Background:
Conditions: 150 mM KOAc, 10 mM MgCl2 and 150 mM bicine (pH 8.5), 24 C. Structure probing data (2A3) for a 207-nucleotide construct.

[RMDB]
RNA sequence: GGGAACGACUCGAGUAGAGUCGAAAAUGUAGCAAUUGUGAAUGGGAGUUCACUCAUGAUUUGGCUCUCUUUUUGUCUGUUAUUGGUGUAUAGGAAUGCUUGUGAUUCUUGCACAUUGAUUUUGUAUCCUGAGACUUUGCUGAAGCUGCUUAUCAGCGACAGCUUCGGUGUUCGCACCGAAGCUGUCAAAAGAAACAACAACAACAAC
Reactivity to 2A3 in 0.01 (KOAc 150mM, MgCl2 10mM, bicine 150mM(pH8.5), 24C), signal-to-noise 1, nucleotides 027 to 156: u120g020u110a010g100c010a060a120u220u040g020u010g070a110a100u120g030g040g000a020g050u150u160c040a040c010u080c010a030u060g120a170u040u020u140g050g000c000u000c010u000c000u050u080u000u040u080g070u000c010u070g030u070u060a120u030u080g080g000u040g070u040a130u090a160g020g060a060a030u040g100c090u110u110g090u090g220a200u080u010c030u040u020g000c010a000c010a080u000u130g010a020u080u050u010u160g060u080a040u040c020c010u000g010a040g010a030c000u040u090u090g000c000u020g010a030a060g010c070u040g000c020u200u130a120u200c010a000g030c040
Source: RMDB library OK3TST, as collected in RNAgym. For 2A3 the reverse transcriptase was SuperScript II with manganese.